The record gives the reactivity of an RNA of 177 nucleotides to DMS and 2A3. The RNA was probed in 150 mM KOAc, 10 mM MgCl2 and 150 mM bicine (pH 8.5) at 24 C. The 2A3 profile rests on 830 reads.

RNA sequence: GGGAACGACUCGAGUAGAGUCGAAAAAGAUGGUUAGGCACUAAUUGCAGGGUCACCGACCAGAUAACAUGCAAACCAGACGUGCGUUUUUGCAUUUUGUUUUGCAGUAAAUAAUCGGCGAAAUGUGGGUACACAUCUGGUUCGCCAGAUGUGUACCAAAAGAAACAACAACAACAAC
Reactivity to DMS in 0.01 (KOAc 150mM, MgCl2 10mM, bicine 150mM(pH8.5), 24C), signal-to-noise 2, nucleotides 027 to 126: a070g010a140u000g000g000u010u010a080g020g020c090a060c090u000a140a100u020u000g000c030a030g020g030g010u000c030a090c070c020g020a070c040c020a100g000a020u020a030a040c110a040u000g000c000a030a020a030c030c000a000g000a040c300g050u000g000c020g000u020u000u020u000u010g020c000a000u000u000u010u000g010u020u000u000u000g000c000a040g000u020a040a100a140u000a090a050u000c000g020g000c040g000a010a120a080u000g020u010g000
Reactivity to 2A3 in 0.01 (KOAc 150mM, MgCl2 10mM, bicine 150mM(pH8.5), 24C), signal-to-noise 1, nucleotides 027 to 126: a030g120a090u050g000g070u050u020a080g020g010c020a000c040u060a040a190u170u150g070c100a020g000g000g000u010c020a000c070c020g000a040c000c000a000g030a050u090a020a070c080a070u050g030c010a050a000a000c000c010a000g050a070c010g100u040g060c000g020u060u070u080u270u300g000c020a010u010u040u020u040g080u010u000u020u010g020c000a000g030u160a020a080a000u160a080a090u120c070g050g020c040g120a070a050a100u200g080u120g000